[RMDB]
RNA sequence: GGGAACGACUCGAGUAGAGUCGAAAAGAUAUGGAGGCUCUCCGUUGUCAGCCUACUCGGAAACGAGUUAGGCUUGGAUUUACGGAGAGGCCUCCUAAGUCAAAAGCUACCUCUUCGGAGGUAGCAAGAUUCUACCCUACUUCGGUAGGGUAGAAUCAAAAGAAACAACAACAACAAC
Reactivity to 2A3 in 0.01 (KOAc 150mM, MgCl2 10mM, bicine 150mM(pH8.5), 24C), signal-to-noise 2, nucleotides 027 to 126: g000a020u040a030u110g000g000a000g010g000c010u020c000u020c010c020g060u080u130g210u210c000a000g000c000c000u000a000c010u000c000g010g040a040a040a030c010g010a000g050u060u100a000g000g000c030u020u100g040g000a040u160u200u300a020c030g000g000a010g020a000g000g010c000c000u010c000c000u010a020a010g000u030c030a100a000a000a150g010c000u010a000c000c000u000c000u070u100c300g180g000a000g010g010u000a000g000c000a000a010
Reactivity to DMS in 0.01 (KOAc 150mM, MgCl2 10mM, bicine 150mM(pH8.5), 24C), signal-to-noise 2, nucleotides 027 to 126: g020a050u010a300u020g000g000a040g000g010c000u000c000u000c000c000g030u000u010g000u010c010a030g010c000c000u000a010c010u010c000g020g010a110a100a120c000g010a040g010u020u010a000g020g000c010u010u000g070g000a040u000u010u000a020c000g000g000a030g010a020g010g010c010c000u010c000c000u000a020a070g010u000c060a100a100a120a140g010c000u000a010c010c000u000c000u010u010c170g030g000a010g000g020u000a000g000c000a010a020

This 177-nucleotide RNA was probed chemically with 2A3 and DMS.
For DMS, 1,979 sequencing reads were counted.
Reactivities are given for positions 27 through 126.
Source: RMDB library TTRDEL, as collected in RNAgym.